Source: RMDB library OK3TST, as collected in RNAgym. Structure probing data (2A3 and DMS) for a 207-nucleotide construct. The RNA was probed in 150 mM KOAc, 10 mM MgCl2 and 150 mM bicine (pH 8.5) at 24 C. DMS adducts were read by reverse transcription with MarathonRT. 2A3 adducts were read by reverse transcription with SuperScript II with manganese.
[RMDB]
RNA sequence: GGGAACGACUCGAGUAGAGUCGAAAAGAGUGACGCAGAGGCUCUCUGGGCCAAGAUCAACAAGCGGCGCUGGGAUCGCGAGCAGGCACGGCUGAAGCCGGCCGAGGUCGAGCUGCGGGACGGCAACUUCCGCCUUCGCGGCCUGGUGGCCGGCGAGACUCUAGUACCUAUUCGUAGGUACUAGAGUAAAAGAAACAACAACAACAAC
Reactivity to 2A3 in 0.01 (KOAc 150mM, MgCl2 10mM, bicine 150mM(pH8.5), 24C), signal-to-noise 2, nucleotides 027 to 156: g100a010g030u060g030a030c050g040c080a010g020a070g140g020c010u030c020u010c040u090g020g000g050c010c020a050a000g030a140u140c070a030a110c030a100a070g010c030g020g010c050g020c040u050g000g030g080a140u070c020g000c030g030a010g020c040a050g010g000c020a030c160g030g000c070u080g100a110a020g050c060c020g000g010c010c010g000a040g010g030u050c040g040a050g050c040u130g070c040g020g000g050a040c020g030g060c010a050a050c010u100u020c000c000g000c040c050u070u070c030g000c010g010g000c000c010u030g060g010u050g080g000c000c000g010g000c000g000a010g010
Reactivity to DMS in 0.01 (KOAc 150mM, MgCl2 10mM, bicine 150mM(pH8.5), 24C), signal-to-noise 1, nucleotides 027 to 156: g020a070g010u000g010a060c060g000c040a200g040a180g030g040c020u020c090u000c040u010g010g000g000c030c010a130a150g000a140u000c070a060a060c100a130a180g050c000g060g010c030g050c020u000g020g010g010a060u000c010g010c010g020a100g030c100a140g010g000c040a140c070g020g010c040u000g000a110a280g060c010c000g000g010c010c030g020a040g050g050u000c040g020a050g040c010u000g030c050g050g000g020a050c080g010g020c090a100a070c100u010u000c020c020g000c000c040u000u000c010g050c040g040g010c010c000u000g010g030u000g020g010c020c000g000g000c030g000a100g000